[RMDB]
RNA sequence: GGGAACGACUCGAGUAGAGUCGAAAAAUUUUCUUUGUUUCUCGAGUCUUUGCUAAUACAGGCAGUGUUUGCUACACUCCUAUAGAUGAGAUACCCUAUAAGAGUUUCUCUGAUAGUGGUUGCAUUCCAAGAUACCUGUUCGCAGGUAUCAAAAGAAACAACAACAACAAC
Reactivity to 2A3 in 0.01 (KOAc 150mM, MgCl2 10mM, bicine 150mM(pH8.5), 24C), signal-to-noise 7, nucleotides 027 to 129: a000u120u110u020u040c020u010u060u090g030u010u050u040c010u000c010g010a000g010u000c000u010u080u040g060c010u040a090a080u120a160c090a030g030g030c020a030g010u000g040u070u100u130g010c010u050a010c010a000c030u030c000c000u050a060u050a060g130a070u100g020a020g020a110u070a070c010c000c000u070a070u040a170a070g050a000g010u040u080u020c010u010c000u000g060a060u020a060g070u100g060g000u010u020g020c030a060u040u040c000c000a050a000
Reactivity to DMS in 0.01 (KOAc 150mM, MgCl2 10mM, bicine 150mM(pH8.5), 24C), signal-to-noise 4, nucleotides 027 to 129: a040u030u010u000u010c040u050u020u000g030u020u010u000c000u000c000g000a050g030u030c010u000u000u000g000c030u030a100a120u050a100c130a030g000g000c140a020g010u000g010u010u030u060g030c120u040a120c000a000c020u000c040c000u020a100u020a000g020a110u040g000a010g020a000u000a040c000c000c000u000a040u050a050a050g010a070g000u010u000u020c000u000c000u010g010a070u000a080g000u000g000g000u030u020g010c110a060u000u000c000c000a040a190